[RMDB]
RNA sequence: GGGAACGACUCGAGUAGAGUCGAAAAGUGAAAGCUCCUUCUCUCGCAAUGUGUAACUCAUGAUUCUCGUGACCCCUGGUUGGAGAGAUCCGGACUAGGAGCCAGGGGGCCUCUGAUUCUGCCAGCCAAAACUGUCGUAAGUUCGCUUACGACAGAAGUAAUAUAUGGCCUUCGGGCCAUAUAUUACAAAAGAAACAACAACAACAAC
Reactivity to 2A3 in 0.01 (KOAc 150mM, MgCl2 10mM, bicine 150mM(pH8.5), 24C), signal-to-noise 2, nucleotides 027 to 156: g070u070g010a120a060a000g020c030u080c010c010u040u020c040u000c010u050c060g030c080a120a140u080g030u050g020u150a080a050c030u010c060a040u090g070a140u140u000c020u020c050g100u110g100a080c000c000c000c000u000g010g000u070u090g100g010a040g010a010g030a080u010c040c060g060g090a110c040u150a110g010g020a000g020c000c000a010g000g000g000g000g030c010c000u010c040u020g040a110u080u030c020u040g030c040c000a010g000c040c050a100a090a040a070c010u010g000u000c000g000u000a000a000g000u020u120c230g020c160u000u000a000c000g000a000c010a000g000a000a000

Conditions: 150 mM KOAc, 10 mM MgCl2 and 150 mM bicine (pH 8.5), 24 C.
An RNA of 207 nucleotides, treated with 2A3 and read out base by base.
2A3 adducts were read by reverse transcription with SuperScript II with manganese.
The data come from the RNA Mapping Database (RMDB), library M2RFPK.